Structure probing data (DMS and 2A3) for a 177-nucleotide construct.
It was measured as part of the RMDB library M2PK90.
Conditions: 150 mM KOAc, 10 mM MgCl2 and 150 mM bicine (pH 8.5), 24 C.
RNA sequence: GGGAACGACUCGAGUAGAGUCGAAAAGAACUCACCAGCAAAUGUUUACGACAAGAUUCGACAUUUGCUAAUUACGUAGCGAUCUUCCAGAAUCUUGUCGAAACGUUCCCAAUCGCUACGCCCUAAAAAUGCAACAUAGGUUCGCCUAUGUUGCAUUAAAAGAAACAACAACAACAAC
Reactivity to DMS in 0.01 (KOAc 150mM, MgCl2 10mM, bicine 150mM(pH8.5), 24C), signal-to-noise 3, nucleotides 027 to 126: g010a060a060c070u020c050a120c130c100a050g010c070a050a040a060u010g010u000u010u010a270c040g000a020c000a010a010g000a040u010u010c010g000a110c160a060u000u000u000g010c040u000a040a060u010u010a030c060g000u000a010g010c000g000a020u010c160u000u010c150c160a110g000a020a010u000c010u010u010g000u000c020g010a040a040a100c080g020u000u000c010c000c000a110a050u000c010g010c010u000a010c010g000c020c010c030u000a000a070a080
Reactivity to 2A3 in 0.01 (KOAc 150mM, MgCl2 10mM, bicine 150mM(pH8.5), 24C), signal-to-noise 2, nucleotides 027 to 126: g010a050a040c030u020c070a060c030c030a030g140c020a050a040a130u170g070u130u170u140a070c010g000a000c000a020a030g000a020u060u000c020g030a050c090a170u180u190u190g040c040u010a000a000u120u060a020c010g000u000a000g020c020g030a020u030c060u190u060c150c060a060g030a000a000u000c000u000u000g000u000c000g020a040a020a000c040g020u000u010c010c000c000a010a020u010c000g000c000u010a010c000g000c020c010c000u060a100a120a030